[RMDB]
Background
The record gives the reactivity of an RNA of 177 nucleotides to DMS and 2A3. The data come from the RNA Mapping Database (RMDB), library OK2TRN.

RNA sequence: GGGAACGACUCGAGUAGAGUCGAAAACAGACGCCGUGUCGCGGUGGUUUGUUCCGGAUCACCUGGUGUCUGGCUCACUUUGCGUCUGCCGUCCUCUUGGGGUUGGCGUUGAGCAGUAUUGCCGGCAGUUGCCUAGUCUGUUCGCAGACUAGGCAACAAAAGAAACAACAACAACAAC
Reactivity to DMS in 0.01 (KOAc 150mM, MgCl2 10mM, bicine 150mM(pH8.5), 24C), signal-to-noise 1, nucleotides 027 to 126: c020a020g010a030c020g060c010c010g030u000g020u000c160g070c180g000g030u000g000g000u000u000u000g000u010u000c090c010g000g010a020u000c010a020c020c020u010g020g020u000g000u000c000u000g020g020c000u000c060a070c190u010u000u000g020c030g010u000c010u000g010c020c010g000u000c020c030u000c160u000u000g040g000g000g000u000u010g000g010c040g000u000u000g010a180g020c060a070g000u000a130u010u000g020c100c030g030g000c080a150
Reactivity to 2A3 in 0.01 (KOAc 150mM, MgCl2 10mM, bicine 150mM(pH8.5), 24C), signal-to-noise 2, nucleotides 027 to 126: c010a010g010a000c010g000c020c030g080u070g070u140c080g010c090g070g000u050g010g050u030u020u050g110u170u000c070c050g030g000a060u060c010a030c000c040u110g030g000u040g020u030c010u010g010g000c040u000c010a090c050u100u090u200g000c000g030u010c030u030g020c010c000g210u100c010c050u180c100u100u300g060g020g010g000u030u020g000g000c030g020u040u020g020a010g000c050a010g000u090a110u120u240g080c080c020g010g040c060a070
Values cover nucleotides 27 to 126. 2A3 adducts were read by reverse transcription with SuperScript II with manganese. The reactions ran in a buffer of 150 mM KOAc, 10 mM MgCl2 and 150 mM bicine (pH 8.5), at 24 C.